An RNA of 177 nucleotides, treated with DMS and read out base by base. Source: RMDB library TTRINS, as collected in RNAgym. The reactions ran in a buffer of 150 mM KOAc, 10 mM MgCl2 and 150 mM bicine (pH 8.5), at 24 C.
RNA sequence: GGGAACGACUCGAGUAGAGUCGAAAAGAUAUGGAGGUGAAUCACGCAAGAUUCAGGUCCGAAGAACGCUUUCGGAAACGAAAGCGGGAGGACCUGAAUCUUGACCCGUGCAAUCACCUCCUAAGUCCGUGUACUUAGUGUUCGCACUAAGUACACGAAAAGAAACAACAACAACAAC
Reactivity to DMS in 0.01 (KOAc 150mM, MgCl2 10mM, bicine 150mM(pH8.5), 24C), signal-to-noise 2, nucleotides 027 to 126: g010a070u000a300u010g020g000a030g010g040u010g000a040a140u010c000a000c000g000c030a010a000g000a010u000u000c000a010g010g020u000c000c000g000a120a270g030a240a170c020g000c000u000u000u020c000g030g000a130a120a250c000g010a000a030a000g010c000g030g050g000a070g000g000a030c000c000u000g000a000a000u000c000u000u000g000a070c250c220c050g020u000g000c300a070a080u000c000a000c000c000u000c000c000u010a000a080g000u040c040